[RMDB]
RNA sequence: GGGAACGACUCGAGUAGAGUCGAAAAGAAUAUAAAGCGCGAGGGACCAAUUGCGAGCGACCUCGCGCAACCAGCUGCCGACUCACCAAGCGCGCAGCCAGCUGGAGGUUACGCUCGCAAGAGAAGAGCUAGUAUUAUCCUUCGGGAUAAUACUAGCAAAAGAAACAACAACAACAAC
Reactivity to DMS in 0.01 (KOAc 150mM, MgCl2 10mM, bicine 150mM(pH8.5), 24C), signal-to-noise 3, nucleotides 027 to 126: g000a120a050u000a120u030a020a090a160g030c000g030c010g040a030g010g000g000a150c060c090a040a050u000u010g000c000g030a010g010c010g000a060c000c000u010c000g000c040g030c000a040a060c060c020a040g000c010u020g000c060c020g030a050c020u010c090a140c180c140a120a070g000c070g020c100g010c000a040g020c100c050a020g010c000u020g000g020a130g000g000u040u010a110c010g030c010u000c000g010c020a040a080g000a100g010a030a080g010a160
Reactivity to 2A3 in 0.01 (KOAc 150mM, MgCl2 10mM, bicine 150mM(pH8.5), 24C), signal-to-noise 8, nucleotides 027 to 126: g010a040a020u260a020u110a140a090a000g000c020g010c000g000a000g020g000g020a040c040c040a110a270u100u050g000c000g000a000g000c000g010a020c000c000u010c000g000c000g000c010a000a000c000c000a000g000c000u010g010c020c030g100a160c030u010c080a140c050c030a120a040g050c040g010c020g010c160a010g010c010c000a010g000c020u040g000g020a040g070g050u130u090a030c020g000c000u000c000g000c000a010a010g020a000g010a140a010g050a020

Description:
Chemical mapping of a 177-nucleotide RNA with DMS and 2A3. Conditions: 150 mM KOAc, 10 mM MgCl2 and 150 mM bicine (pH 8.5), 24 C. For 2A3 the reverse transcriptase was SuperScript II with manganese. For DMS the reverse transcriptase was MarathonRT. The data come from the RNA Mapping Database (RMDB), library OK1LIB. Reactivities are given for positions 27 through 126.